[RMDB]
RNA sequence: GGGAACGACUCGAGUAGAGUCGAAAAGAAGCGAUUAAGGUGCAUCAGGGCGGCAACAAAAGUACCCGCCGUCAGCGGGCGAUUGACCUGCUGAAUCAGGUCGGUAUUCCCGAUCCGGCAUCGCGUCGAUGACCCGUCCAUUCGUGGACGGGUCAUCAAAAGAAACAACAACAACAAC
Reactivity to DMS in 0.01 (KOAc 150mM, MgCl2 10mM, bicine 150mM(pH8.5), 24C), signal-to-noise 1, nucleotides 027 to 126: g030a130a080g020c040g010a010u010u000a090a220g010g020u000g000c050a100u010c050a200g070g010g080c140g050g010c200a130a090c080a060a080a140a050g040u000a040c090c000c060g000c020c010g010u000c050a040g010c000g000g040g030c060g020a100u010u030g000a090c000c000u010g010c030u060g000a050a060u010c080a090g010g040u000c300g040g000u000a130u000u000c130c000c000g000a060u000c040c080g000g000c020a040u000c040g020c090g020u010c040
Conditions: 150 mM KOAc, 10 mM MgCl2 and 150 mM bicine (pH 8.5), 24 C. An RNA of 177 nucleotides, treated with DMS and read out base by base. DMS adducts were read by reverse transcription with MarathonRT. The data come from the RNA Mapping Database (RMDB), library OK2TRN.